Overview
The record gives the reactivity of an RNA of 177 nucleotides to DMS and 2A3. The RNA was probed in 150 mM KOAc, 10 mM MgCl2 and 150 mM bicine (pH 8.5) at 24 C. DMS adducts were read by reverse transcription with MarathonRT.

RNA sequence: GGGAACGACUCGAGUAGAGUCGAAAACCAGGAAUGGCGGGACCCCACUUCAUCGGAGUCCGCGUACCAUCCUUUCUUACCUGAUGGCCGGCAUGGUCCCAGCCUCCCCGCUGGCGCCGGCUGGGCACCAACUAAAGGAGUUCGCUCCUUUAGUUGGAAAAGAAACAACAACAACAAC
Reactivity to DMS in 0.01 (KOAc 150mM, MgCl2 10mM, bicine 150mM(pH8.5), 24C), signal-to-noise 3, nucleotides 027 to 126: c050c020a070g010g000a060a030u000g000g030c010g000g000g010a010c010c000c000c010a170c200u020u000c280a150u000c100g020g010a020g010u000c020c010g020c070g030u010a110c010c000a030u000c000c010u000u010u010c080u010u010a130c040c060u010g010a120u010g010g010c020c010g010g030c000a140u000g020g000u000c300c000c000a020g010c030c070u000c040c040c050c160g000c000u020g010g000c200g000c010c000g000g000c010u000g000g000g020c120a190
Reactivity to 2A3 in 0.01 (KOAc 150mM, MgCl2 10mM, bicine 150mM(pH8.5), 24C), signal-to-noise 2, nucleotides 027 to 126: c000c000a010g010g000a160a090u020g020g010c000g000g000g010a010c020c000c010c000a080c070u300u280c070a280u220c130g000g000a020g010u000c020c020g130c040g080u040a060c010c000a010u020c000c000u060u100u030c070u070u120a110c030c050u110g120a150u160g270g040c000c000g000g000c080a120u160g050g030u100c000c010c010a010g010c000c010u160c000c000c000c000g020c020u010g050g000c040g020c020c020g060g010c020u020g000g000g000c020a020